[RMDB]
RNA sequence: GGGAACGACUCGAGUAGAGUCGAAAAUCCGGAGCUCCCUCUCGAGUUCCUCCUUUCUUCUUCUUCCAUCGAUCCACUUUCCGAGUGCCUCUUCUCUCCCCCUCCGGGUUCUCCUCGCAUCGGACUGGUGCAUUAAAUACUUCGGUAUUUAAUGCACAAAAGAAACAACAACAACAAC
Reactivity to DMS in 0.01 (KOAc 150mM, MgCl2 10mM, bicine 150mM(pH8.5), 24C), signal-to-noise 1, nucleotides 027 to 126: u010c040c030g020g000a120g000c050u010c030c020c070u000c050u000c040g000a100g010u000u000c070c040u010c060c030u000u010u010c050u010u000c040u000u000c060u010u000c020c030a090u000c060g000a110u000c050c020a060c040u000u020u000c050c040g010a110g010u000g000c050c020u000c040u000u000c020u000c040u010c010c000c010c010c000u000c020c010g010g000g020u000u000c020u000c000c020u000c030g010c050a090u010c040g020g000a120c120u010g020
An RNA of 177 nucleotides, treated with DMS and read out base by base. DMS adducts were read by reverse transcription with MarathonRT. Source: RMDB library 15KREP, as collected in RNAgym. The reactions ran in a buffer of 150 mM KOAc, 10 mM MgCl2 and 150 mM bicine (pH 8.5), at 24 C.